[RMDB]
RNA sequence: GGGAACGACUCGAGUAGAGUCGAAAACACUGAGUCUUCGGACUCAGUGAAAAGCUCGAAAAGGACCAAAACGAGCAAUAACAUAAAUAAAGGUCCAAAUUAAAAGUCUAGCGUUCGCGCUAGACAACAGCAUAUAUCUCUUCGGAGAUAUAUGCUGAAAAGAAACAACAACAACAAC
Reactivity to 2A3 in 0.01 (KOAc 150mM, MgCl2 10mM, bicine 150mM(pH8.5), 24C), signal-to-noise 2, nucleotides 027 to 126: c000a000c000u010g010a000g020u000c010u040u130c200g020g010a010c000u010c000a010g000u000g000a000a000a010a010g000c000u000c000g010a040a030a050a150g010g000a010c010c010a140a050a040a050c010g000a010g000c030a000a010u140a060a000c010a000u080a030a030a010u210a050a040a010g010g000u020c000c000a000a010a040u100u060a030a030a000a020g000u020c000u000a000g010c010g030u030u030c290g030c010g000c090u000a000g000a000c000a000a020
Reactivity to DMS in 0.01 (KOAc 150mM, MgCl2 10mM, bicine 150mM(pH8.5), 24C), signal-to-noise 2, nucleotides 027 to 126: c010a020c010u000g000a040g020u000c000u000u010c160g060g010a000c000u000c000a000g030u020g010a060a050a140a180g010c010u010c000g000a030a050a090a120g010g010a000c000c010a060a040a080a070c000g000a000g010c000a070a090u010a130a150c120a030u000a010a010a030u000a020a030a220g000g010u000c000c000a050a080a090u000u000a080a090a100a110g010u000c000u000a000g000c000g010u000u020c230g030c010g020c000u000a000g000a000c000a010a080
Chemical mapping of a 177-nucleotide RNA with 2A3 and DMS.
Source: RMDB library M2PK50, as collected in RNAgym.
For 2A3 the reverse transcriptase was SuperScript II with manganese.
The reactions ran in a buffer of 150 mM KOAc, 10 mM MgCl2 and 150 mM bicine (pH 8.5), at 24 C.
The DMS profile rests on 1,653 reads.